[RMDB]
RNA sequence: GGGAACGACUCGAGUAGAGUCGAAAAGCUGUGGGGCCAGCCACGCUCCAGACCAGGGCCUCCCAGCGCCUCAGCCUCGACCCUCAAGCCACCUGGACUGGCAGGCAACAGAGGGCGUCCACCGGCGCUACAUAUGUUGGUUCGCCAACAUAUGUAGAAAAGAAACAACAACAACAAC
Reactivity to 2A3 in 0.01 (KOAc 150mM, MgCl2 10mM, bicine 150mM(pH8.5), 24C), signal-to-noise 4, nucleotides 027 to 126: g010c020u010g010u030g020g010g020g010c010c020a050g080c080c010a080c070g020c040u040c020c020a140g030a300c060c090a070g040g020g010c010c000u000c000c020c000a010g020c010g030c010c000u060c050a030g010c020c010u140c050g150a300c010c010c000u020c040a070a030g030c030c010a040c010c000u040g020g060a070c020u010g020g000c010a040g020g010c040a070a010c020a060g030a030g000g020g010c010g010u020c020c030a100c020c070g040g010c030g010
Reactivity to DMS in 0.01 (KOAc 150mM, MgCl2 10mM, bicine 150mM(pH8.5), 24C), signal-to-noise 9, nucleotides 027 to 126: g020c010u010g020u000g000g000g000g020c010c030a130g000c070c060a070c220g020c050u000c020c040a060g000a090c080c070a110g010g000g010c020c020u000c010c020c010a060g000c030g000c030c020u000c080a100g010c040c020u000c060g000a160c010c010c020u000c030a090a120g010c090c120a120c030c010u000g000g010a130c070u000g000g000c020a050g000g000c040a070a080c150a110g010a050g000g000g010c030g010u000c030c060a080c120c090g010g010c080g010